[RMDB]
RNA sequence: GGGAACGACUCGAGUAGAGUCGAAAAGAUAUGGACCGGAUGAAAUCGAAGAACGCACUCGGAAACGAGUGCGGGAGAUUCAUUACGGUCCUAAGUCAAAAUCCGCAAGUGUUCGCACUUGCGGAAACCGAAUGAGUAUGUUCGCAUACUCAUUCGGAAAAGAAACAACAACAACAAC
Reactivity to DMS in 0.01 (KOAc 150mM, MgCl2 10mM, bicine 150mM(pH8.5), 24C), signal-to-noise 1, nucleotides 027 to 126: g030a050u010a260u000g000g010a010c000c000g000g020a020u000g000a030a160a130u010c030g000a080a220g000a170a220c010g000c000a010c000u020c000g050g010a030a070a100c010g020a030g010u000g010c020g000g010g000a020g020a080u000u010c000a010u000u000a130c000g010g000u000c000c010u010a000a060g020u030c030a090a070a090a110u000c000c000g000c040a020a010g030u000g030u000u000c250g010c000a000c000u000u000g030c000g010g000a010a010a080
Reactivity to 2A3 in 0.01 (KOAc 150mM, MgCl2 10mM, bicine 150mM(pH8.5), 24C), signal-to-noise 1, nucleotides 027 to 126: g000a000u040a010u080g010g010a000c000c010g020g040a010u030g060a050a220a300u170c110g140a290a040g020a060a000c010g000c020a000c000u000c000g000g070a020a050a010c010g000a000g000u000g000c000g000g000g000a010g000a010u100u020c000a030u010u180a300c010g000g000u000c000c000u010a010a000g010u010c010a050a000a000a270u020c000c000g000c010a000a000g010u000g030u080u150c270g080c100a000c000u000u000g000c020g000g000a020a000a000
Source information: An RNA of 177 nucleotides, treated with DMS and 2A3 and read out base by base. Reactivities are given for positions 27 through 126. It was measured as part of the RMDB library TTRDES. 2A3 is a SHAPE reagent: it acylates the 2'-hydroxyl of flexible nucleotides of all four kinds.